[RMDB]
RNA sequence: GGGAACGACUCGAGUAGAGUCGAAAAGCUUAUUUAGCGGAUACUGUUAAGGUACAAGCUCUUAAUACCUAUUUUGACCAUCUGCUAGAAAACAAACUUGUUCUUCAGGCAGUGGUCGAUGCAAAUAACUAAGGGAGGAGUUCGCUCCUCCCUUAGUAAAAGAAACAACAACAACAAC
Reactivity to 2A3 in 0.01 (KOAc 150mM, MgCl2 10mM, bicine 150mM(pH8.5), 24C), signal-to-noise 1, nucleotides 027 to 126: g000c010u060u020a000u100u160u060a100g010c010g070g000a070u060a180c050u090g000u120u100a070a100g010g030u080a040c060a100a060g000c010u000c000u090u190a090a070u110a190c000c000u050a190u070u110u010u080g000a000c000c000a000u150c010u020g010c000u010a050g000a030a020a010a000c050a010a290a050c060u090u100g000u020u060c030u030u000c000a050g010g030c000a000g020u010g000g000u010c000g010a010u020g000c000a140a060a080u250a050
Reactivity to DMS in 0.01 (KOAc 150mM, MgCl2 10mM, bicine 150mM(pH8.5), 24C), signal-to-noise 3, nucleotides 027 to 126: g000c100u000u000a100u010u000u010a030g010c040g010g040a250u010a050c080u010g030u000u010a080a050g010g000u020a040c120a120a110g010c040u010c080u000u010a090a120u000a110c010c010u010a110u000u000u000u000g000a040c000c010a010u000c010u000g000c010u000a150g000a000a010a010a000c010a040a140a210c230u010u010g020u010u000c170u010u000c000a300g010g010c000a020g020u000g000g010u000c010g010a000u000g000c230a070a140a090u010a090
About this RNA: The record gives the reactivity of an RNA of 177 nucleotides to 2A3 and DMS. For 2A3, 890 sequencing reads were counted. The RNA was probed in 150 mM KOAc, 10 mM MgCl2 and 150 mM bicine (pH 8.5) at 24 C.